[RMDB]
RNA sequence: GGGAACGACUCGAGUAGAGUCGAAAAGCGCUGUACUCAACGUACGCAGAAAUAGCCUCCACGUCAAGUAUAUGACUGCCGCGCGGCGCGCGUGACCAAAUAAACUCGCGCUCAAUUUCCACAGCUUCGCGGAACAGCUCGUAGAUGCGGGCCGGCGCGAACGCGCCUAAUUCGUUAGGCGCGUUCGAAAAGAAACAACAACAACAAC
Reactivity to DMS in 0.01 (KOAc 150mM, MgCl2 10mM, bicine 150mM(pH8.5), 24C), signal-to-noise 2, nucleotides 027 to 156: g010c040g010c010u000g000u000a060c040u000c040a060a060c050g020u000a050c100g010c030a060g000a060a090a160u000a080g020c000c000u000c080c070a070c070g030u000c030a070a100g010u000a120u030a040u010g000a130c040u000g040c020c020g010c040g030c050g010g000c040g030c090g010c010g000u000g030a180c050c050a120a090a160u000a070a030a100c040u010c030g020c010g060c000u000c050a120a120u000u000u010c020c030a090c070a140g010c030u000u000c010g010c000g000g000a030a050c030a070g000c040u010c050g060u000a100g060a190u000g000c000g020g000g040c020c030g000g060c010g010
Reactivity to 2A3 in 0.01 (KOAc 150mM, MgCl2 10mM, bicine 150mM(pH8.5), 24C), signal-to-noise 3, nucleotides 027 to 156: g060c040g050c080u090g000u020a030c030u040c180a230a030c110g030u020a010c020g000c050a020g160a050a080a040u170a040g020c010c010u020c050c030a100c020g020u010c030a050a070g060u020a150u050a050u220g040a020c040u030g010c010c000g000c000g030c030g000g030c020g000c000g000c000g100u030g050a200c030c080a130a070a040u130a070a100a010c010u020c010g010c000g000c010u010c060a070a080u030u090u060c050c030a060c000a030g020c010u040u020c000g000c000g010g010a120a130c000a010g010c010u000c020g030u040a060g000a100u110g030c000g010g050g000c000c060g050g010c020g010
This 207-nucleotide RNA was probed chemically with DMS and 2A3.
DMS adducts were read by reverse transcription with MarathonRT.
The 2A3 profile rests on 1,515 reads.